[RMDB]
RNA sequence: GGGAACGACUCGAGUAGAGUCGAAAAGAAAACAAGUACCGAGAACAUUGUUUUCGCUGCUUGGCGUUGCCGUUUUGUGUUGCAGUUGGUUGGGUAACGCCGCAAAUACCAACGGGAUAGAAAGAUAAUAUAAUACCGUAUUCGUACGGUAUUAUAUAAAAGAAACAACAACAACAAC
Reactivity to DMS in 0.01 (KOAc 150mM, MgCl2 10mM, bicine 150mM(pH8.5), 24C), signal-to-noise 8, nucleotides 027 to 126: g010a070a030a090a100c030a010a000g010u010a040c260c030g000a040g010a040a020c030a170u030u030g000u000u000u000u000c000g020c200u000g000c010u010u000g000g010c020g000u000u010g010c010c010g010u020u010u010u010g020u010g010u010u000g010c070a140g000u000u000g000g010u000u000g010g010g000u000a040a070c190g000c000c010g000c120a030a050a070u010a070c010c000a020a030c020g000g000g010a130u010a080g000a070a050a080g010a090u020a070
Reactivity to 2A3 in 0.01 (KOAc 150mM, MgCl2 10mM, bicine 150mM(pH8.5), 24C), signal-to-noise 7, nucleotides 027 to 126: g020a000a030a000a010c020a000a010g040u060a040c070c050g060a060g030a060a030c100a300u150u250g010u000u010u000u000c010g020c030u010g000c020u040u120g000g000c000g020u000u010g010c010c040g020u040u050u090u170g150u030g050u050u130g100c080a070g020u050u050g090g000u060u140g110g010g000u020a010a000c020g000c010c000g000c010a040a040a010u130a020c010c010a010a000c030g030g050g020a090u090a110g120a040a090a010g080a030u110a230
Chemical mapping of a 177-nucleotide RNA with DMS and 2A3. Values cover nucleotides 27 to 126.